RNA sequence: GGGAACGACUCGAGUAGAGUCGAAAAAAGGAUAACUCGGUUGGGAUUGCGUUCUGUAAUGGACGCAUGAACCAGGAAUUCCUAGUAGUCGCGUGUCACUAACGGGCGACGACUGCGUCCCUGUUCUCGUAAAACACAUCUUCGGAUGUGUUUUACGAAAAGAAACAACAACAACAAC
Reactivity to 2A3 in 0.01 (KOAc 150mM, MgCl2 10mM, bicine 150mM(pH8.5), 24C), signal-to-noise 1, nucleotides 027 to 126: a000a000g010g000a010u020a060a090c030u060c220g030g030u010u030g260g070g050a060u010u010g010c000g000u020u000c000u000g090u060a110a100u300g000g000a000c010g040c000a000u020g040a000a000c000c000a010g030g000a020a100u070u000c000c010u000a000g000u000a000g000u020c000g010c100g030u030g080u140c040a010c260u100a170a070c140g030g020g000c000g020a050c010g020a020c060u020g000c010g000u000c000c000c000u010g080u110u050c020u010